RNA sequence: GGGAACGACUCGAGUAGAGUCGAAAAUUGGCAAUUCUGUUGCCGAAGCUGUUGAUAAACUUGUUAAACAAGCCAUAGAUUUCAUAGUCUGGCGUGCCCAGUAUCUUAAUCUAUAUGGCUGAAAUCUACCUUUCAGACACUGUGUGGUAUGUGGGGCCAACUGUGAAAAGUUCGCUUUUCACAGUUGAAAAGAAACAACAACAACAAC
Reactivity to DMS in 0.01 (KOAc 150mM, MgCl2 10mM, bicine 150mM(pH8.5), 24C), signal-to-noise 3, nucleotides 027 to 156: u010u010g010g020c020a040a030u010u000c170u010g030u010u000g000c000c010g010a070a140g020c020u000g020u010u000g000a130u000a080a080a100c120u000u010g010u000u000a080a120a160c050a090a050g040c010c020a050u000a070g010a060u000u000u010c120a120u010a150g000u010c000u000g020g000c010g010u010g020c100c010c000a030g000u000a020u010c040u000u000a060a050u000c050u000a070u000a040u010g010g000c010u000g000a030a030a060u000c040u000a060c080c090u000u000u010c020a060g010a070c010a040c040u000g020u000g030u000g030g020u000a030u000g020u000g020g000g010g030c080
Reactivity to 2A3 in 0.01 (KOAc 150mM, MgCl2 10mM, bicine 150mM(pH8.5), 24C), signal-to-noise 3, nucleotides 027 to 156: u010u080g010g000c020a010a010u150u060c100u300g100u030u010g000c010c010g010a020a010g040c080u040g020u100u030g050a120u100a100a110a060c040u090u120g030u070u130a060a040a030c040a090a000g030c010c000a000u000a010g020a050u040u090u130c060a040u090a100g080u000c000u000g030g000c090g110u060g030c020c010c000a020g000u050a060u050c040u020u080a020a020u010c000u020a110u030a030u220g000g000c000u000g060a020a020a040u090c040u040a050c000c010u070u050u050c030a040g040a080c050a030c120u070g040u060g040u100g130g000u100a030u110g090u060g010g010g000g000c030
Structure probing data (DMS and 2A3) for a 207-nucleotide construct. DMS adducts were read by reverse transcription with MarathonRT. Source: RMDB library OK3TST, as collected in RNAgym. The RNA was probed in 150 mM KOAc, 10 mM MgCl2 and 150 mM bicine (pH 8.5) at 24 C.